[RMDB]
RNA sequence: GGGAACGACUCGAGUAGAGUCGAAAACCAUAUACAAACUGCCUUUUUUUCGUUUUAGUUUACUUAUUGUGAAAUGUAAAUAUGUCCCACUGCUCAAUUUUUAACGGGACUCCAGGUUUUAGUUACUCGCACUUAAAGGAUUCGUCCUUUAAGUGCGAAAAGAAACAACAACAACAAC
Reactivity to 2A3 in 0.01 (KOAc 150mM, MgCl2 10mM, bicine 150mM(pH8.5), 24C), signal-to-noise 2, nucleotides 027 to 126: c010c020a010u000a000u020a120c030a000a140a030c030u080g010c020c020u080u100u020u000u050u050u090c020g010u010u220u110u080a090g010u000u000u110a050c020u080u110a100u100u160g050u000g050a080a010a110u040g000u130a050a000a020u100a100u230g020u000c050c010c000a140c120u050g000c030u000c060a150a160u010u120u020u220u190a110a030c060g020g000g020a000c000u000c050c020a060g000g110u010u050u080u170a000g000u000u010a040c020u000